[RMDB]
RNA sequence: GGGAACGACUCGAGUAGAGUCGAAAAUAGCAAAGUGGAUGGUCUACUCAGUUAGAUGAAAACAAAACAUUUAAUGCAGAGAAUGGAAUCCCAAAGAAAUGGGAUUCUGUGGGUGAAGAUGGAAUAUCAGAGUUCUCACCUAAGAAGUUUAGAUCAACAUACCUGGACGGUUCGCCGUCCAGGUAUGAAAAGAAACAACAACAACAAC
Reactivity to 2A3 in 0.01 (KOAc 150mM, MgCl2 10mM, bicine 150mM(pH8.5), 24C), signal-to-noise 1, nucleotides 027 to 156: u150a000g050c030a000a070a000g030u020g080g000a080u060g050g010u000c020u050a040c010u020c030a040g010u010u000a020g000a030u020g050a000a120a000a120c080a000a050a050a000c000a030u130u100u060a090a000u110g020c030a000g000a000g010a150a020u050g000g020a060a000u070c020c020c030a000a070a000g110a000a070a070u100g000g020g020a000u000u000c000u020g020u000g000g000g000u070g010a030a090g000a040u080g040g070a050a040u080a060u270c100a010g020a020g120u020u030c020u000c020a020c000c000u010a010a070g120a040a020g030u070u070u300a030g000a020u110c000a000a050